[RMDB]
RNA sequence: GGGAACGACUCGAGUAGAGUCGAAAAAUUAAUACGCAGGAUGCAAAUCCCUACUGGCGCCGACGCCACAAUCUUGCGGUUGAAUUGCUCAUUCUCUUCCAACUGGAACGCAUUCACUUCCGCAGGCGUAAUUCGGCUUAUUCGUAAGCCGAAUUACAAAAGAAACAACAACAACAAC
Reactivity to DMS in 0.01 (KOAc 150mM, MgCl2 10mM, bicine 150mM(pH8.5), 24C), signal-to-noise 2, nucleotides 027 to 126: a060u050u050a070a020u040a100c100g010c060a050g030g000a070u010g030c140a070a120a080u010c000c000c010u010a130c120u000g000g000c010g020c120c080g010a120c050g000c030c020a050c130a040a030u030c010u000u000g010c010g000g000u020u000g000a040a010u020u020g020c020u000c080a280u020u010c000u010c080u020u000c050c090a150a140c130u000g000g010a020a030c180g000c020a090u000u000c070a050c270u020u000c010c000g000c030a030g000g000c300
Reactivity to 2A3 in 0.01 (KOAc 150mM, MgCl2 10mM, bicine 150mM(pH8.5), 24C), signal-to-noise 7, nucleotides 027 to 126: a000u160u090a070a070u110a060c070g000c060a060g030g120a050u100g020c040a050a030a140u030c000c000c000u050a080c060u050g010g020c030g000c060c130g110a120c040g020c010c000a050c020a050a080u040c010u020u020g010c000g000g020u000u010g020a040a040u150u130g000c030u020c110a080u160u000c100u020c000u190u090c070c040a160a130c180u130g030g010a030a030c010g000c010a010u010u010c010a010c070u060u000c010c000g000c000a010g010g000c030
Overview: An RNA of 177 nucleotides, treated with DMS and 2A3 and read out base by base. For DMS the reverse transcriptase was MarathonRT. The RNA was probed in 150 mM KOAc, 10 mM MgCl2 and 150 mM bicine (pH 8.5) at 24 C.